About this RNA
Chemical mapping of a 207-nucleotide RNA with 2A3. As a SHAPE reagent, 2A3 marks flexible, mostly unpaired nucleotides at the ribose 2'-OH. It was measured as part of the RMDB library OK3TST. For 2A3 the reverse transcriptase was SuperScript II with manganese.
[RMDB]
RNA sequence: GGGAACGACUCGAGUAGAGUCGAAAAAGGGACACCUCACUCACAUUUUACCAACAGAGUGAGAGUGAGGUUAACCUCUCAUUUCUGUUGGUGAAGGCAGAAGUUAGAGGUUGAGAACACUGACAACUGCCUUCAUAGUUGUGAGUGUUCUGUCCCACGCUGGAUGGGUAUUCGUACCCAUCCAGCGAAAAGAAACAACAACAACAAC
Reactivity to 2A3 in 0.01 (KOAc 150mM, MgCl2 10mM, bicine 150mM(pH8.5), 24C), signal-to-noise 1, nucleotides 027 to 156: a010g060g000g000a040c010a040c040c000u000c000a000c000u040c000a010c000a010u050u070u070u270a070c000c000a020a000c010a000g030a000g030u020g040a000g000a010g020u080g040a120g060g060u030u140a060a080c030c000u060c000u010c020a100u190u300u070c000u000g000u000u000g040g020u040g000a000a020g000g000c000a010g010a020a000g000u010u010a020g080a070g180g000u040u070g030a030g030a040a010c020a000c020u000g020a000c000a030a100c030u000g040c060c000u010u010c020a060u080a030g160u100u000g000u000g010a000g000u000g000u000u020c000u030g010u010c010c030c000a020